The data come from the RNA Mapping Database (RMDB), library OK3TST. The record gives the reactivity of an RNA of 207 nucleotides to DMS and 2A3. The RNA was probed in 150 mM KOAc, 10 mM MgCl2 and 150 mM bicine (pH 8.5) at 24 C. For 2A3 the reverse transcriptase was SuperScript II with manganese. The 2A3 profile rests on 4,724 reads.
RNA sequence: GGGAACGACUCGAGUAGAGUCGAAAACCUUGCCAGCAAGGGAACAAAACUGGACGGAGAAUGAGUUUGAUGAACUGACAGAAGUAGGCUUCAGAAGGUGGGUAAUAACAGACUCCUCCAAGCUAAAGGAGCAUGUUCCAACCCAAUGCAAGGAAGCACUUAUUUUUCAUUUCGAUGAAAAAUAAGUAAAAGAAACAACAACAACAAC
Reactivity to DMS in 0.01 (KOAc 150mM, MgCl2 10mM, bicine 150mM(pH8.5), 24C), signal-to-noise 4, nucleotides 027 to 156: c010c010u000u010g010c040c050a090g020c030a080a150g000g000g000a100a150c090a040a050a060a080c010u000g020g030a110c070g020g020a100g000a080a120u010g000a100g000u000u000u000g020a100u000g000a060a080c030u000g030a150c050a100g020a070a110g010u000a060g030g020c010u000u000c020a110g010a070a200g010g020u000g000g000g000u000a060a090u000a020a050c020a090g000a080c000u000c010c000u000c020c030a090a150g040c210u000a050a080a040g020g000a040g030c040a060u000g000u000u000c040c050a130a090c020c020c010a020a060u000g010c050a060a150g020g000a070a050g020c080
Reactivity to 2A3 in 0.01 (KOAc 150mM, MgCl2 10mM, bicine 150mM(pH8.5), 24C), signal-to-noise 5, nucleotides 027 to 156: c000c000u010u040g030c020c020a040g050c030a080a050g050g000g020a030a040c030a030a080a020a030c070u060g010g030a030c050g060g030a060g030a060a150u130g010a030g090u050u110u090g090a100u060g020a040a040c030u040g050a030c040a050g050a070a010g030u130a040g040g050c010u030u020c020a050g030a140a020g140g020u040g010g010g020u070a070a050u070a130a000c010a040g040a160c000u000c000c000u040c040c020a080a030g050c040u220a170a030a030g010g010a000g020c040a030u090g010u010u030c030c000a030a050c020c020c000a050a030u100g010c010a020a030g070g010a020a000g030c030